[RMDB]
RNA sequence: GGGAACGACUCGAGUAGAGUCGAAAAGAUUCAACUGACUUCAUAGCCCUCAUUAUGGCUUAUGGCAAUUGCACAUUUGGUGCUCCAGAUGAUGCCUCUCGGUUACUUCAUACCGUGCUUGCAAAGGAUAUCAGACCGUUCGCGGUCUGAAAAAGAAACAACAACAACAAC
Reactivity to DMS in 0.01 (KOAc 150mM, MgCl2 10mM, bicine 150mM(pH8.5), 24C), signal-to-noise 4, nucleotides 027 to 129: g000a010u030u020c040a040a080c060u020g000a090c130u000u020c030a070u010a080g010c010c000c110u050c220a000u000u000a090u060g020g040c020u010u060a020u030g030g000c180a120a040u000u000g000c030a000c000a100u000u000u000g000g000u030g000c080u000c120c010a060g010a080u060g010a070u010g000c000c080u010c030u040c060g050g000u010u030a070c130u100u020c180a180u040a050c030c020g020u030g020c130u050u020g010c090a030a020a050g030g020a000u010a110
Reactivity to 2A3 in 0.01 (KOAc 150mM, MgCl2 10mM, bicine 150mM(pH8.5), 24C), signal-to-noise 6, nucleotides 027 to 129: g070a050u060u040c020a050a060c060u080g060a010c010u060u050c040a040u080a000g000c000c020c000u060c060a140u040u180a100u250g010g000c010u050u140a030u100g030g000c060a080a200u110u110g000c010a030c010a060u060u040u160g070g000u100g050c050u040c010c000a020g000a030u040g030a050u050g000c000c020u000c010u000c000g010g010u010u010a080c060u080u130c030a040u050a040c000c010g020u010g020c030u010u020g000c000a050a070a030g100g000a020u020a020